RNA sequence: GGGAACGACUCGAGUAGAGUCGAAAAGCGUCGCCCUCGAUUCGGACCUCGGCCCCGCGGAGGCGGUCGACGACGGUGGCCAGCCGGUCCGCCAGUCGGACGACCUGACUCGGGAGGGCGGUGUCGGCAAACACGCCGAAUUCGUUCGGCGUGUUUGAAAAGAAACAACAACAACAAC
Reactivity to DMS in 0.01 (KOAc 150mM, MgCl2 10mM, bicine 150mM(pH8.5), 24C), signal-to-noise 3, nucleotides 027 to 126: g010c030g000u000c020g000c010c000c020u000c000g010a190u000u000c040g000g010a150c020c020u000c160g040g010c010c020c000c030g020c100g020g010a130g000g010c090g000g010u010c000g000a110c000g010a050c030g020g010u000g000g020c030c000a170g010c190c200g010g000u000c010c000g000c000c030a060g010u000c000g010g000a140c080g020a070c080c020u000g020a040c010u010c050g030g000g000a040g020g000g020c010g000g000u000g000u010c050g000g000
Reactivity to 2A3 in 0.01 (KOAc 150mM, MgCl2 10mM, bicine 150mM(pH8.5), 24C), signal-to-noise 1, nucleotides 027 to 126: g020c020g030u030c010g000c000c030c000u000c020g210a220u080u070c040g030g020a040c000c020u060c070g070g010c030c000c010c040g040c060g080g020a020g030g060c050g070g030u060c000g010a010c030g010a010c000g020g040u110g010g000c030c020a090g170c130c200g000g000u040c000c000g020c000c010a010g010u010c000g000g000a140c050g050a030c000c020u030g050a030c020u030c020g090g090g040a020g000g020g000c030g000g000u030g040u040c030g000g030
Structure probing data (DMS and 2A3) for a 177-nucleotide construct. The data come from the RNA Mapping Database (RMDB), library OK2TST. The reactions ran in a buffer of 150 mM KOAc, 10 mM MgCl2 and 150 mM bicine (pH 8.5), at 24 C.